[RMDB]
RNA sequence: GGGAACGACUCGAGUAGAGUCGAAAAAAGCAGGCCGGGGAAUGGUGGUUUACCCCGUUAUCAAAUGAUUACCGACCAAUAAUUGGCGAAACUCGUUUCGCGUUGGCUGCCUAAUUCAAGGAAUUAGAAUAGCUCUCCGGGUUCGCCCGGAGAGCAACUAAUAGGGAAAGUUCGCUUUCCCUAUUAGAAAAGAAACAACAACAACAAC
Reactivity to DMS in 0.01 (KOAc 150mM, MgCl2 10mM, bicine 150mM(pH8.5), 24C), signal-to-noise 1, nucleotides 027 to 156: a100a060g020c030a060g000g040c040c030g000g010g000g030a050a010u010g020g010u000g020g000u010u000u000a110c030c010c010c030g010u010u000a080u000c290a050a070a100u010g000a180u010u010a050c020c020g020a070c040c040a060a100u010a080a170u010u010g020g020c010g020a080a070a070c050u010c120g020u010u000u000c000g040c050g060u000u000g020g010c060u000g000c090c010u010a010a060u000u000c020a170a160g020g010a070a030u000u010a060g010a110a110u000a090g030c020u000c000u000c010c010g000g030g070u000u000c300g000c050c000c040g010g000a040g020a020g030c010a000a040
Reactivity to 2A3 in 0.01 (KOAc 150mM, MgCl2 10mM, bicine 150mM(pH8.5), 24C), signal-to-noise 1, nucleotides 027 to 156: a000a000g040c010a020g000g050c080c000g000g020g010g010a010a010u020g010g020u000g000g000u040u040u100a080c000c010c000c000g040u010u020a050u060c020a040a060a010u090g020a040u060u050a040c000c010g110a060c070c010a030a030u220a100a070u150u150g040g000c000g010a000a050a080c040u070c140g030u000u010u000c000g000c000g010u020u020g010g000c020u060g020c000c010u020a020a050u030u040c070a160a070g180g000a050a020u030u020a030g020a090a140u110a080g000c000u000c000u030c010c030g030g000g060u020u060c120g080c000c020c050g010g000a000g000a000g000c010a000a000

Source information
Structure probing data (DMS and 2A3) for a 207-nucleotide construct. Source: RMDB library M2RFPK, as collected in RNAgym. In probing experiments dimethyl sulfate is read out at A N1 and C N3, which are open when not base-paired. The 2A3 profile rests on 957 reads.